[RMDB]
RNA sequence: GGGAACGACUCGAGUAGAGUCGAAAAGGGUUAUCCAGCUCCCUUGCUUCUCUCCUCUCCCACUUAUCUUUUGAACUUUUUUCAGCCAAAGAUUUUUACCCAAAAACGAGCCUGAAGAGGAAGGAAGUAAUAGACAGGCGUUCGCGCCUGUCUAUUAAAAAGAAACAACAACAACAAC
Reactivity to DMS in 0.01 (KOAc 150mM, MgCl2 10mM, bicine 150mM(pH8.5), 24C), signal-to-noise 2, nucleotides 027 to 126: g000g000g000u010u040a040u030c120c020a050g040c070u000c050c010c000u040u020g000c020u020u000c000u000c010u000c000c000u000c080u000c080c000c040a170c150u030u000a080u000c020u000u020u030u000g030a070a260c050u000u000u000u020u000u020c050a060g010c140c020a050a060a090g000a060u000u000u000u010u000a130c020c050c010a020a120a010a010a080c060g000a150g000c180c080u030g000a150a020g050a010g020g000a010a050g020g000a020a100g040
Reactivity to 2A3 in 0.01 (KOAc 150mM, MgCl2 10mM, bicine 150mM(pH8.5), 24C), signal-to-noise 2, nucleotides 027 to 126: g030g020g000u070u070a050u160c000c000a010g030c000u040c000c000c000u010u040g010c000u030u000c040u010c000u000c000c000u000c010u030c030c040c000a030c040u050u040a060u050c020u000u060u070u080g100a100a070c000u130u040u000u040u060u240c060a050g010c040c040a080a050a020g050a090u030u030u000u060u050a080c020c040c040a070a040a000a030a000c040g020a020g010c020c050u050g010a080a020g000a030g050g000a010a030g020g010a010a020g010

Overview:
Structure probing data (DMS and 2A3) for a 177-nucleotide construct. For 2A3, 924 sequencing reads were counted. The DMS profile rests on 1,573 reads.